Annotation:
The record gives the reactivity of an RNA of 177 nucleotides to DMS. It was measured as part of the RMDB library OK2TST. The DMS profile rests on 1,473 reads.

RNA sequence: GGGAACGACUCGAGUAGAGUCGAAAACGGUGUUGCCGCCGGCGGCCUUGUCCAGCGCCAGCCCCGCCGCCGCGGCGACGAUCGGGUUGAGGAACAGGAUGCCGGCCAGGGACAGGGCGAUGCACUAUCAGUACGGCGUAUUCGUACGCCGUACUGAAAAAGAAACAACAACAACAAC
Reactivity to DMS in 0.01 (KOAc 150mM, MgCl2 10mM, bicine 150mM(pH8.5), 24C), signal-to-noise 1, nucleotides 027 to 126: c040g000g030u000g010u000u000g000c010c000g000c090c070g020g020c000g000g010c040c170u000u040g000u000c060c070a160g030c100g010c080c080a090g010c020c040c050c140g000c010c000g010c000c000g020c040g010g000c000g000a000c000g000a030u000c040g010g010g020u000u000g010a090g020g000a040a080c120a080g010g010a070u010g020c040c080g000g010c090c040a080g020g000g000a050c050a040g010g030g010c040g010a030u010g010c090a080c080u010a150